[RMDB]
RNA sequence: GGGAACGACUCGAGUAGAGUCGAAAAGAGGGUGUAAAGAGCGACUUUUUGUUCGGUAUUGUACCACCGUUAUCGGGCUAAACUUGUAGUUGCAAAUGACAACUAUGCGGAAGCUCGUCUCGCUGCUUAAUUGCGGUGUGACACUUCACAUUAAGCCGAACAGCUUCACGUUCGCGUGAAGCUGUUCAAAAGAAACAACAACAACAAC
Reactivity to 2A3 in 0.01 (KOAc 150mM, MgCl2 10mM, bicine 150mM(pH8.5), 24C), signal-to-noise 1, nucleotides 027 to 156: g080a030g130g040g040u020g010u080a010a020a120g150a000g020c000g090a050c090u130u100u040u160u180g100u080u020c000g000g000u030a000u040u010g020u020a040c000c000a060c000c000g110u070u020a090u160c020g020g000g010c010u030a010a010a010c020u010u240g000u030a010g020u000u000g020c090a130a100a300u110g020a080c000a080a110c000u040a000u090g070c040g190g000a000a000g000c110u080c200g000u000c050u050c000g000c000u000g000c000u050u100a050a070u300u120g000c000g000g000u020g000u000g000a020c000a000c050u000u020c000a000c000a010u080u100a060a060g110c090c050